Source: RMDB library OK1LIB, as collected in RNAgym. Structure probing data (2A3 and DMS) for a 177-nucleotide construct. DMS adducts were read by reverse transcription with MarathonRT.

RNA sequence: GGGAACGACUCGAGUAGAGUCGAAAACACUAGCUUUAGAAGCUGUAACUGACUUUAGAAGCUGUAACUCUUACAGCAAUGUAAGAGUGAUACCUAGCAGAGUCAGUGAUACCUAGCAGAGCUAGAAGAUAAUGUUUACUUUCGAGUGAACAUUAUCAAAAGAAACAACAACAACAAC
Reactivity to 2A3 in 0.01 (KOAc 150mM, MgCl2 10mM, bicine 150mM(pH8.5), 24C), signal-to-noise 9, nucleotides 027 to 126: c030a000c000u000a000g000c000u040u050u050a070g040a130a020g010c010u010g000u010a030a020c000u000g010a000c000u020u030u050a080g040a150a010g020c010u000g010u020a050a040c000u000c000u000u000a000c000a010g020c030a030a070u010g000u000a000a000g000a000g000u000g000a000u010a020c030c070u040a010g000c010a010g000a000g010u000c000a000g000u000g000a010u030a040c020c040u020a010g000c010a000g000a000g000c000u000a000g020a050a010
Reactivity to DMS in 0.01 (KOAc 150mM, MgCl2 10mM, bicine 150mM(pH8.5), 24C), signal-to-noise 9, nucleotides 027 to 126: c080a280c010u000a000g000c000u000u000u010a100g010a130a080g010c090u010g000u000a130a030c000u000g000a010c000u000u000u010a150g010a120a080g010c080u020g010u010a120a030c000u000c000u000u000a000c000a010g000c300a060a050u000g000u000a000a000g000a010g010u000g000a100u040a040c260c090u010a040g010c090a120g000a000g000u000c000a000g000u000g000a090u040a040c260c060u000a040g010c090a110g000a010g000c000u000a000g000a100a100